[RMDB]
RNA sequence: GGGAACGACUCGAGUAGAGUCGAAAAGGAUGGGCAAAUAGCACGGGAAUGUUCCCCGCAUUCCAAUCGCGGAUCGUGUCGGGGUGUUUGUCCAAAGCACGCCCCUUGGGGAAGGCACGCUGCAACCGUGCGACAUCACUUUUAAAGUGAUACGCCAGGGUGCUUCAUGUUUCGACAUGAAGCACCCAAAAGAAACAACAACAACAAC
Reactivity to 2A3 in 0.01 (KOAc 150mM, MgCl2 10mM, bicine 150mM(pH8.5), 24C), signal-to-noise 1, nucleotides 027 to 156: g110g020a130u220g020g050g050c040a050a050a100u100a050g000c020a000c090g030g000g000a000a060u000g040u080u140c010c000c000c000g040c010a020u050u000c030c040a110a060u140c140g000c050g000g060a110u300c020g000u010g020u010c030g020g010g090g000u020g000u090u130u090g060u000c040c020a000a090a000g030c010a000c010g040c000c000c000c010u040u090g000g000g000g000a020a020g080g010c000a020c020g030c050u040g020c000a030a120c040c010g000u040g000c000g000a000c000a040u030c000a060c040u050u000u090u180a110a240a040g030u000g000a020u000a280c060g000c010c020a000